An RNA of 177 nucleotides, treated with 2A3 and DMS and read out base by base. Source: RMDB library M2PK50, as collected in RNAgym. Conditions: 150 mM KOAc, 10 mM MgCl2 and 150 mM bicine (pH 8.5), 24 C. Values are in units of 0.01, from 0 to 300, in steps of 10. 2A3 adducts were read by reverse transcription with SuperScript II with manganese. The 2A3 profile rests on 1,221 reads. For DMS, 962 sequencing reads were counted.
[RMDB]
RNA sequence: GGGAACGACUCGAGUAGAGUCGAAAAGAGCCUUGGUUCGCCAAGGCUCAAAUAAAUUCAGGUGAUUUGCUACCUUUAAGUGCAGCUAGAAAUUCAAAGCAAAAAGGCACAAGUUCGCUUGUGCCAAGAUUUACGCUAACUUCGGUUAGCGUAAAUCAAAAGAAACAACAACAACAAC
Reactivity to 2A3 in 0.01 (KOAc 150mM, MgCl2 10mM, bicine 150mM(pH8.5), 24C), signal-to-noise 2, nucleotides 027 to 126: g010a010g030c010c020u040u010g020g060u040u120c190g030c040c000a030a000g010g000c000u000c000a010a000a000u000a000a000a010u100u070c040a000g030g010u010g030a150u050u030u110g000c000u020a030c000c040u020u220u300a080a000g040u030g010c020a020g030c030u090a040g150a060a090a010u220u190c080a080a100a080g020c010a000a070a030a020a130g010g010c000a000c000a020a000g000u030u070c150g000c040u040u030g000u010g000c010c000a000a000
Reactivity to DMS in 0.01 (KOAc 150mM, MgCl2 10mM, bicine 150mM(pH8.5), 24C), signal-to-noise 1, nucleotides 027 to 126: g010a030g020c000c000u010u000g000g000u000u010c230g010c010c000a000a020g010g010c000u000c000a010a020a030u020a060a060a080u010u010c140a010g000g010u000g000a170u000u000u010g000c010u010a030c000c010u000u000u000a020a040g000u000g010c040a010g000c300u000a140g000a050a030a140u000u010c120a080a080a090g020c140a040a050a070a120a060g000g030c000a010c020a000a010g020u000u000c230g010c010u000u000g000u000g000c000c010a010a020